[RMDB]
RNA sequence: GGGAACGACUCGAGUAGAGUCGAAAACUGGCCAUAAAAUUCUUCGGGGUCGAUUUGACCAGUGGUAUAUUUUCCGCCAAGACGGUCCCUCUAACAUUCCACCCUCGUGCGUCAGGUCGCUCAUUGCGUUAGAUCAUCGAUUCGUCGAUGAUCUAACAAAAGAAACAACAACAACAAC
Reactivity to 2A3 in 0.01 (KOAc 150mM, MgCl2 10mM, bicine 150mM(pH8.5), 24C), signal-to-noise 3, nucleotides 027 to 126: c010u000g020g010c010c000a060u170a100a170a060a120u150u130c050u100u090c080g030g030g080g040u060c020g080a120u070u020u260g020a030c020c020a030g040u040g050g150u030a110u020a070u190u090u090u000c010c010g000c020c020a050a010g050a050c050g000g040u050c000c000c000u040c020u030a060a050c010a060u130u070c010c000a020c000c020c000u030c030g060u060g040c010g000u010c010a030g040g030u030c010g040c030u040c020a070u010u220g030c030
Reactivity to DMS in 0.01 (KOAc 150mM, MgCl2 10mM, bicine 150mM(pH8.5), 24C), signal-to-noise 4, nucleotides 027 to 126: c020u000g000g010c030c030a070u000a130a150a110a070u010u000c040u010u000c110g030g000g010g030u000c040g010a180u000u010u010g010a020c020c010a050g020u000g010g000u010a090u000a070u010u000u010u000c050c060g010c050c080a060a090g010a100c060g000g010u000c020c020c010u000c080u000a060a120c150a120u000u000c030c040a080c040c020c020u000c060g000u000g020c040g010u000c040a070g030g020u010c030g020c060u000c080a100u010u000g000c210